[RMDB]
RNA sequence: GGGAACGACUCGAGUAGAGUCGAAAAAAGACACACGUUCACACCCAGUCCAUCAUGGUGAUAGAGUGGCUGGGGUCCUACUUUGCCACCCUUCAAUGCUGGUUCAUAAUCAGCUGUCUGACCACGUUCCUACCCUGAGGUAGGACUUUGGGACAUAGUUUUAAUAAAUGUUCGCAUUUAUUAAAACAAAAGAAACAACAACAACAAC
Reactivity to DMS in 0.01 (KOAc 150mM, MgCl2 10mM, bicine 150mM(pH8.5), 24C), signal-to-noise 2, nucleotides 027 to 156: a070a050g000a050c010a070c070a030c090g000u000u000c040a060c030a130c030c000c010a040g020u000c020c010a180u000c070a160u000g020g030u000g010a140u000a090g010a130g020u000g000g020c020u000g000g000g020g020u000c000c050u000a040c060u020u000u010g000c000c000a100c010c010c040u000u000c070a070a110u010g010c030u010g000g000u000u000c120a100u010a050a050u000c010a040g020c000u010g000u000c040u000g010a290c000c020a080c080g000u000u000c000c000u000a020c010c010c080u000g030a190g020g020u000a020g020g000a010c010u000u000u010g010g010g010a110c050a070u000a130
Reactivity to 2A3 in 0.01 (KOAc 150mM, MgCl2 10mM, bicine 150mM(pH8.5), 24C), signal-to-noise 5, nucleotides 027 to 156: a000a020g110a000c070a010c020a010c100g070u140u100c050a070c010a060c060c010c010a010g030u030c050c020a080u090c040a080u180g100g040u100g100a110u140a100g100a020g030u070g010g020c020u010g020g000g000g000u000c000c010u050a110c030u110u110u090g050c030c010a020c020c010c000u080u150c080a100a070u140g000c000u010g030g020u030u060c050a080u140a290a010u030c010a000g000c010u020g030u000c040u040g030a050c030c020a040c070g070u160u060c000c000u010a010c010c000c090u210g090a120g090g020u000a000g000g000a000c010u020u040u090g010g010g020a020c010a040u120a020